[RMDB]
RNA sequence: GGGAACGACUCGAGUAGAGUCGAAAAAAACUUAACAACUCGAGACGGUAAGAAGGAAACUAAGGAGUAGAAGAAGAAGGGUGAAAAGAUGAAAGAAAUUUCACCACAUGCAGGGAAAGGGUAACUCAUGCAACCACCUUUUCGAAGGUGGUUGCAUAAAAGAAACAACAACAACAAC
Reactivity to DMS in 0.01 (KOAc 150mM, MgCl2 10mM, bicine 150mM(pH8.5), 24C), signal-to-noise 1, nucleotides 027 to 126: a080a000a010c040u000u000a100a080c140a130a070c000u000c000g030a020g050a170c010g000g010u050a030a040g010a040a140g000g000a050a030a050c080u070a140a090g060g000a030g010u000a050g010a030a030g000a000a250g010a120a030g010g000g010u000g000a010a040a000a090g000a130u050g010a060a030a040g000a180a010a080u010u000u010c030a050c000c030a020c090a000u010g050c150a050g030g000g010a050a000a040g000g020g000u000a010a000c070u030c060